[RMDB]
Description:
Structure probing data (2A3 and DMS) for a 177-nucleotide construct. The reactions ran in a buffer of 150 mM KOAc, 10 mM MgCl2 and 150 mM bicine (pH 8.5), at 24 C. Values cover nucleotides 27 to 126. It was measured as part of the RMDB library OK2TRN.
RNA sequence: GGGAACGACUCGAGUAGAGUCGAAAAUCGCGGUCGCGUGGCGUAUUCAGCUCGAUUUCGCCGUCGUCGCAUAGCAGUGUUUUGGACGAAUAGCCGUUGCGGGUAUUCGAGCCUGAUUUAGGGGUAACGAUCAGGAGUCAUUCGUGACUCCUGAUCGAAAAGAAACAACAACAACAAC
Reactivity to 2A3 in 0.01 (KOAc 150mM, MgCl2 10mM, bicine 150mM(pH8.5), 24C), signal-to-noise 1, nucleotides 027 to 126: u060c030g000c030g020g040u180c000g000c050g040u060g050g000c020g010u020a020u030u080c090a050g110c100u110c080g020a040u070u090u040c000g000c020c010g040u020c010g030u030c000g000c030a030u080a030g050c070a020g030u060g150u030u140u190u090g000g010a000c000g060a050a000u010a040g020c010c020g010u050u200g130c110g000g030g020u010a040u040u000c020g020a170g040c000c010u080g030a050u100u170u170a040g090g070g000g040u050a100a000
Reactivity to DMS in 0.01 (KOAc 150mM, MgCl2 10mM, bicine 150mM(pH8.5), 24C), signal-to-noise 2, nucleotides 027 to 126: u020c120g030c030g020g000u020c060g030c100g070u010g000g010c030g000u000a060u000u000c050a150g010c160u010c110g010a090u000u000u000c030g010c010c040g010u000c020g010u000c030g000c110a110u020a100g020c090a080g000u010g000u000u000u000u000g010g010a130c030g000a030a040u000a040g000c030c010g000u010u010g050c110g010g000g000u010a010u000u000c030g000a110g000c030c010u000g010a080u000u000u010a050g000g020g000g010u000a080a140